The data come from the RNA Mapping Database (RMDB), library RSTRND. Chemical mapping of a 207-nucleotide RNA with 2A3. 2A3 adducts were read by reverse transcription with SuperScript II with manganese. The reactions ran in a buffer of 150 mM KOAc, 10 mM MgCl2 and 150 mM bicine (pH 8.5), at 24 C. Values cover nucleotides 27 to 156.

RNA sequence: GGGAACGACUCGAGUAGAGUCGAAAAAUACAAACUCUUACGCUUUAGCUGCCUAAAAACCAGCUAGCGUGACUUCUUCAAGAUUGCUUGUGUCCUGAUAGAAGUCUCAAAAACAGCAAGCUACGACUAAAGCCUUGUCUAGAGCCUUAGUAAGAGACUCGAGAGAAUACUUCGGUAUUCUCUCGAGAAAAGAAACAACAACAACAAC
Reactivity to 2A3 in 0.01 (KOAc 150mM, MgCl2 10mM, bicine 150mM(pH8.5), 24C), signal-to-noise 2, nucleotides 027 to 156: a010u240a010c080a020a150a090c010u080c040u200u040a000c010g010c010u160u190u090a000g000c000u000g000c000c020u100a110a120a010a000a000c000c020a010g000c000u010a010g000c010g000u000g000a000c000u000u000c000u000u000c010a010a010g000a040u050u050g010c010u020u000g000u000g000u000c000c010u010g010a000u040a220g020a010a020g050u000c010u030c080a100a180a050a030a060c060a010g030c000a000a010g000c010u010a000c010g010a000c000u020a010a000a040g010c000c010u130u160g080u200c080u090a040g010a010g050c000c000u010u010a000g020u030a010a020g010a010g200a080